[RMDB]
RNA sequence: GGGAACGACUCGAGUAGAGUCGAAAAACGGAGCCUCGGCAAAAGCUGUCUAUAUAUAGGCAGGAAAGCGGAAACAUGACAAGGGUGCAGUCUAUCAUAGGAGAGUAGAUGCAGCAAUGCAGGUGAAUUGUAGUGCUCGAUUCGUCGAGCACUACAAAAAAGAAACAACAACAACAAC
Reactivity to 2A3 in 0.01 (KOAc 150mM, MgCl2 10mM, bicine 150mM(pH8.5), 24C), signal-to-noise 1, nucleotides 027 to 126: a000c010g090g000a040g110c000c020u000c070g070g000c000a040a050a030a050g070c000u000g000u040c000u000a090u000a000u000a000u060a040g060g000c010a000g010g010a020a010a020g020c000g000g000a170a000a000c060a060u110g180a020c080a000a000g020g000g040u010g090c000a000g080u000c020u020a060u020c030a120u080a020g000g210a150g050a000g030u050a000g000a060u020g040c000a100g000c050a070a080u080g020c010a000g000g080u240g050a040a040
Reactivity to DMS in 0.01 (KOAc 150mM, MgCl2 10mM, bicine 150mM(pH8.5), 24C), signal-to-noise 1, nucleotides 027 to 126: a120c100g020g020a140g050c070c020u060c080g000g000c040a020a090a210a040g000c000u000g000u000c020u000a060u040a040u010a070u000a000g020g000c020a000g000g000a030a040a030g000c000g030g000a020a080a040c090a090u000g000a070c010a080a080g000g000g000u000g000c050a040g000u000c010u000a140u010c050a080u030a090g010g000a130g000a070g000u000a100g000a120u030g000c000a080g020c090a000a090u000g020c040a090g020g000u040g000a100a150

Structure probing data (2A3 and DMS) for a 177-nucleotide construct. Values cover nucleotides 27 to 126. The 2A3 profile rests on 535 reads. The reactions ran in a buffer of 150 mM KOAc, 10 mM MgCl2 and 150 mM bicine (pH 8.5), at 24 C. In probing experiments dimethyl sulfate is read out at A N1 and C N3, which are open when not base-paired. It was measured as part of the RMDB library RFM100.